[RMDB]
RNA sequence: GGGAACGACUCGAGUAGAGUCGAAAAGAAAAUGGUACGAACGGUUCCAAAGGAGCCGAAGUUCAAAGCUAUGGCAUCGAUCUAAAAUCGUAUCAAAAAGGUAACGAGCUUGGCAAUGAACAAAAAACCAUUCUACCUGAUUCGUCAGGUAGAAUGGAAAAGAAACAACAACAACAAC
Reactivity to DMS in 0.01 (KOAc 150mM, MgCl2 10mM, bicine 150mM(pH8.5), 24C), signal-to-noise 2, nucleotides 027 to 126: g010a010a070a070a110u010g000g020u000a000c050g010a070a300c010g000g040u030u000c010c000a050a090a230g020g000a030g030c000c010g010a020a010g020u000u000c040a010a040a300g000c000u000a030u010g020g010c010a030u000c120g010a000u000c060u020a050a040a110a130u010c040g000u000a040u030c040a060a000a050a110a150g000g000u000a030a060c000g000a050g030c000u020u020g000g000c040a030a220u000g000a040a010c010a000a090a040a040a080a060
Reactivity to 2A3 in 0.01 (KOAc 150mM, MgCl2 10mM, bicine 150mM(pH8.5), 24C), signal-to-noise 1, nucleotides 027 to 126: g120a000a100a020a040u080g070g000u070a000c030g010a200a000c000g000g000u020u000c010c010a240a140a160g070g000a000g000c000c010g040a040a010g000u000u000c010a010a010a010g000c000u040a060u230g020g000c010a170u000c020g040a020u000c020u110a010a020a080a190u120c060g070u080a040u090c050a050a140a020a000a000g040g010u010a110a000c020g010a000g010c030u020u020g030g010c010a020a070u050g000a020a020c000a040a110a010a000a000a000
Structure probing data (DMS and 2A3) for a 177-nucleotide construct.
The DMS profile rests on 1,219 reads.
The reactions ran in a buffer of 150 mM KOAc, 10 mM MgCl2 and 150 mM bicine (pH 8.5), at 24 C.
The 2A3 profile rests on 1,967 reads.
2A3 adducts were read by reverse transcription with SuperScript II with manganese.
For DMS the reverse transcriptase was MarathonRT.